[RMDB]
RNA sequence: GGGAACGACUCGAGUAGAGUCGAAAACGACCACGAAGCCGGUGCGAUCCUUACCCGCGAAGCAGUGGGUGAGCACCGGGCGUCCGGCGGCAAGCAGUGUGACGACACGAUGUAGCGCGCGCUGUGCUCCAGAGUAUCCCUUCGGGGAUACUCUGGAAAAAGAAACAACAACAACAAC
Reactivity to DMS in 0.01 (KOAc 150mM, MgCl2 10mM, bicine 150mM(pH8.5), 24C), signal-to-noise 3, nucleotides 027 to 126: c060g000a260c010c010a120c070g000a100a150g020c000c000g000g000u000g010c020g000a210u030c090c100u000u050a010c020c000c000g000c070g000a230a110g030c110a130g050u010g000g030g000u000g010a170g000c030a040c000c000g000g000g000c060g020u000c120c050g010g000c100g000g010c120a120a140g020c000a050g010u010g000u010g000a190c020g000a110c080a100c050g020a190u060g010u010a070g010c070g000c030g020c010g000c000u000g000u000g050c110
Reactivity to 2A3 in 0.01 (KOAc 150mM, MgCl2 10mM, bicine 150mM(pH8.5), 24C), signal-to-noise 2, nucleotides 027 to 126: c020g040a110c020c010a050c010g030a030a020g260c000c020g000g000u020g000c040g050a080u060c020c020u040u170a060c020c030c000g040c000g090a150a040g160c150a040g000u010g000g000g010u000g010a000g000c000a000c000c000g000g000g020c010g030u000c040c030g030g000c000g020g050c050a050a000g000c020a000g030u020g010u050g130a170c010g040a030c010a010c120g130a130u160g040u260a070g040c010g000c000g010c000g010c000u030g010u040g050c010
Background:
Chemical mapping of a 177-nucleotide RNA with DMS and 2A3. Conditions: 150 mM KOAc, 10 mM MgCl2 and 150 mM bicine (pH 8.5), 24 C. DMS adducts were read by reverse transcription with MarathonRT. For 2A3, 1,315 sequencing reads were counted. The DMS profile rests on 2,892 reads.